[RMDB]
RNA sequence: GGGAACGACUCGAGUAGAGUCGAAAAAGCAUGCUUGUUACAUCGCCAGAGUGUCCAUCGCAGGCAAGCAUGCGAAAGGAUGGUCAGCGAUUAUUCCACGCGAGCUUCGACGCCGUUAAGUGCAUGCGAAAGGAUGGUGGAGCGGUCUUGCGAUUGACACCUCAUAGUAGUUCGCUACUAUGAGGUGAAAAGAAACAACAACAACAAC
Reactivity to DMS in 0.01 (KOAc 150mM, MgCl2 10mM, bicine 150mM(pH8.5), 24C), signal-to-noise 2, nucleotides 027 to 156: a250g000c010a010u000g030c010u000u000g010u000u000a130c040a090u010c030g050c010c030a180g010a060g020u010g020u000c020c020a160u010c040g020c050a130g000g010c020a050a120g000c000a020u010g010c000g000a020a100a100g030g020a030u020g000g010u000c060a170g010c040g000a100u000u000a130u010u000c010c070a100c050g010c000g000a140g000c090u000u010c040g010a180c030g050c010c040g000u010u020a060a170g020u000g000c010a080u000g000c010g000a050a100a130g000g000a100u000g000g050u000g000g000a180g020c000g020g000u000c010u020u000g010c010g000a300u010u000g030a300
Reactivity to 2A3 in 0.01 (KOAc 150mM, MgCl2 10mM, bicine 150mM(pH8.5), 24C), signal-to-noise 4, nucleotides 027 to 156: a000g040c040a030u050g000c040u060u030g010u030u050a040c020a060u070c060g020c060c040a030g020a070g140u110g060u000c030c020a050u050c040g020c050a010g040g000c000a000a020g010c010a020u010g000c000g020a070a020a010g090g020a020u070g040g040u040c040a020g030c030g030a020u030u040a090u240u010c030c030a040c040g060c000g040a020g020c000u070u090c050g060a060c030g020c030c000g030u030u080a190a030g040u090g080c020a020u110g010c010g050a090a030a020g070g020a050u090g040g040u030g010g040a040g040c110g000g030u030c040u040u050g000c010g040a020u020u030g030a020